[RMDB]
RNA sequence: GGGAACGACUCGAGUAGAGUCGAAAAGAUGGUGUGCGUUAUUUUAAUGGUCUGACUUUGCAAUAUGUUGGUGACUGGGAAGGUGUUAGCUGCUGGCGUGCUGUUGGUGUUCAAGCCUUUAAUGGUUUUGUGGCAUCACCUACGUUUGAUGAACAGCGGGCACAAUCUUAUUCGUAAGAUUGUGCCCAAAAGAAACAACAACAACAAC
Reactivity to 2A3 in 0.01 (KOAc 150mM, MgCl2 10mM, bicine 150mM(pH8.5), 24C), signal-to-noise 3, nucleotides 027 to 156: g020a060u050g010g030u050g010u060g040c080g030u070u060a150u030u210u030u100a100a080u080g010g010u000c010u010g040a080c080u080u050u130g030c020a040a100u020a050u280g070u050u060g000g020u030g020a060c030u020g010g000g040a010a040g080g020u070g020u080u060a000g010c010u000g000c000u020g020g040c010g030u040g000c040u030g000u030u020g040g010u050g010u000u050c000a010a030g010c010c000u150u220u130a110a170u110g030g020u050u160u050u090g100u030g020g020c000a010u000c000a010c010c010u050a050c030g080u080u110u070g120a110u120g010a070a010c020a060g170c000

This 207-nucleotide RNA was probed chemically with 2A3. The data come from the RNA Mapping Database (RMDB), library OK3TST. Conditions: 150 mM KOAc, 10 mM MgCl2 and 150 mM bicine (pH 8.5), 24 C.